[RMDB]
RNA sequence: GGGAACGACUCGAGUAGAGUCGAAAAGCGGUCUUGAUCUUGGCGAUGCGCGCGAUGCCCGCCUGGCUCAUCGGGUCGCCUUCGUGGCUGAUGAUGAACCGCACCGCGUGCCCGUCCGGCGAGAGGAGAAUUUAAGGGGUUUCGACCCCUUAAAUUCAAAAGAAACAACAACAACAAC
Reactivity to 2A3 in 0.01 (KOAc 150mM, MgCl2 10mM, bicine 150mM(pH8.5), 24C), signal-to-noise 2, nucleotides 027 to 126: g060c040g010g070u000c030u040u100g040a160u050c030u050u120g030g000c010g070a070u080g040c050g010c000g020c020g090a030u120g010c010c030c020g050c050c080u030g010g000c020u000c000a020u000c020g050g110g000u040c020g010c030c020u110u080c210g060u170g010g060c070u150g010a040u030g000a030u010g000a080a030c030c000g000c020a010c000c020g000c010g030u010g000c020c020c000g020u040c030c000g020g050c040g020a040g010a040g050g030a120
Reactivity to DMS in 0.01 (KOAc 150mM, MgCl2 10mM, bicine 150mM(pH8.5), 24C), signal-to-noise 3, nucleotides 027 to 126: g020c070g010g000u010c020u000u010g010a130u000c020u000u010g020g000c030g010a100u000g020c050g030c030g000c070g010a040u000g000c050c140c090g000c100c080u010g000g000c040u000c020a030u000c010g000g010g020u000c060g000c020c040u010u010c160g000u010g010g010c010u000g020a130u020g000a020u000g000a030a040c030c010g010c010a040c010c020g000c000g020u010g000c000c180c010g010u000c020c060g000g020c030g010a180g020a070g000g000a170